[RMDB]
RNA sequence: GGGAACGACUCGAGUAGAGUCGAAAAGAUAUGGACCUCCCGAGCGAGGUACAGCACUGUCGGAAACGACAAACUGUACUACCCACCGCUCGGAGGUCCUAAGUCAAAAGAUCUGUUCGCAGAUCAAGAAGAUUAGGAAGUUCGCUUCCUAAUCUUCAAAAGAAACAACAACAACAAC
Reactivity to DMS in 0.01 (KOAc 150mM, MgCl2 10mM, bicine 150mM(pH8.5), 24C), signal-to-noise 5, nucleotides 027 to 126: g000a040u010a300u000g010g010a000c000c000u000c070c050c070g030a020g010c020g010a080g020g000u000a000c000a010g000c120a130c220u000g000u000c010g010g000a080a060a240c000g000a010c000a020a070a130c020u000g010u000a000c010u000a070c060c030c080a300c100c000g000c010u000c010g000g010a010g000g010u000c000c010u000a000a060g010u010c040a080a060a060a060g000a010u000c010u000g020u010u020c230g000c010a010g000a010u000c010a090a060
Reactivity to 2A3 in 0.01 (KOAc 150mM, MgCl2 10mM, bicine 150mM(pH8.5), 24C), signal-to-noise 2, nucleotides 027 to 126: g000a010u070a020u170g010g000a020c010c010u080c050c090c040g010a000g020c010g000a020g000g040u010a000c000a000g040c050a020c160u050g000u000c010g020g030a100a040a060c000g000a010c000a000a080a010c010u010g000u010a010c000u020a020c050c060c030a050c020c020g000c010u000c000g000g000a010g010g000u000c000c000u000a000a000g020u000c010a040a010a030a140g010a010u000c010u020g040u070u110c270g040c080a000g000a010u010c000a000a050